[RMDB]
RNA sequence: GGGAACGACUCGAGUAGAGUCGAAAAGUGCCUCGUCGGCCCGGCAUGCCACCCUGAUCCGAAGUUCAAGGUGGUUUCUCUGGCCUUCCAGAGAGAUGCGCGUCGGAAGAACCGACGAACAAACCUUAAAACAAAACGACGUUCGCGUCGUUUUGAAGCUAGUGUUACACUUCGGUGUAACACUAGCAAAAGAAACAACAACAACAAC
Reactivity to 2A3 in 0.01 (KOAc 150mM, MgCl2 10mM, bicine 150mM(pH8.5), 24C), signal-to-noise 2, nucleotides 027 to 156: g060u030g070c000c010u000c010g010u000c000g010g020c010c000c000g000g000c030a030u100g020c010c000a000c000c000c000u010g010a000u020c010c020g090a080a030g000u020u000c000a000a000g000g010u000g000g000u020u100u010c010u000c000u010g040g010c040c070u230u180c010c000a000g010a000g020a000g020a060u110g130c090g010c080g040u010c000g000g030a100a060g020a090a130c000c010g000a000c000g010a020a010c030a010a060a030c040c030u180u280a070a120a020a060c000a000a000a010a020c000g000a000c000g020u020u060c190g000c000g110u000c020g000u000u000u000u000g000a020a000
Chemical mapping of a 207-nucleotide RNA with 2A3. The reactions ran in a buffer of 150 mM KOAc, 10 mM MgCl2 and 150 mM bicine (pH 8.5), at 24 C. It was measured as part of the RMDB library M2RFPK. For 2A3 the reverse transcriptase was SuperScript II with manganese. For 2A3, 1,960 sequencing reads were counted. Values cover nucleotides 27 to 156.